[RMDB]
RNA sequence: GGGAACGACUCGAGUAGAGUCGAAAAGAUAUGGACUCCUGAUGUACAACCUGCAUACGAGGAACGUCGGAAACGACGUUCUACCCACCGUAUGAACUACAGGCUGUACAUCAGGAGUCCUAAGUCAUCUGAUAACCUUCUUCGGAAGGUUAUCAGAAAAAGAAACAACAACAACAAC
Reactivity to DMS in 0.01 (KOAc 150mM, MgCl2 10mM, bicine 150mM(pH8.5), 24C), signal-to-noise 1, nucleotides 027 to 126: g010a030u000a300u000g030g000a020c000u000c010c010u010g020a030u000g010u000a000c000a000a090c000c020u010g000c000a000u000a000c000g000a250g000g000a000a000c010g010u000c020g000g000a160a120a270c010g000a010c000g040u000u000c010u020a030c010c060c110a300c080c030g000u000a000u020g000a050a030c070u000a300c010a010g000g020c080u000g000u010a000c000a010u040c000a010g000g000a000g000u000c010c000u000a010a030g000u000c020a090